[RMDB]
RNA sequence: GGGAACGACUCGAGUAGAGUCGAAAAGAUAUGGAUCUGCGAACUACCCCGUAAAUAUGAACUACAAGAAAUGUCGGAAACGACAUUCCUUGCAUAUUUACGGGGUAGGAGGUAUAGAUCCUAAGUCCACUGAGUACAAGUUCGCUUGUACUCAGUGAAAAGAAACAACAACAACAAC
Reactivity to 2A3 in 0.01 (KOAc 150mM, MgCl2 10mM, bicine 150mM(pH8.5), 24C), signal-to-noise 3, nucleotides 027 to 126: g040a030u150a040u300g010g000a020u000c010u010g070c070g120a130a080c010u000a010c010c000c030c010g010u000a000a030a010u030a010u010g030a120a100c100u190a070c300a000a000g020a060a020a010u000g000u020c000g050g000a100a100a100c020g000a000c010a000u000u010c000c000u010u000g020c030a000u020a020u010u000u020a000c000g030g000g000g000u000a000g000g010a000g000g000u100a050u100a170g010a000u020c020c000u030a270a010g100u020c040
Reactivity to DMS in 0.01 (KOAc 150mM, MgCl2 10mM, bicine 150mM(pH8.5), 24C), signal-to-noise 3, nucleotides 027 to 126: g010a140u010a300u000g000g010a000u000c000u010g030c060g010a160a300c000u010a010c000c000c000c000g010u000a000a010a010u000a000u000g000a110a040c120u030a300c020a020a000g010a000a010a010u000g020u000c000g020g020a140a130a280c010g030a010c000a010u000u000c020c000u000u000g000c000a010u000a000u000u000u000a000c010g000g000g000g000u000a000g000g000a010g010g010u010a110u000a020g010a000u000c000c000u000a050a050g010u000c070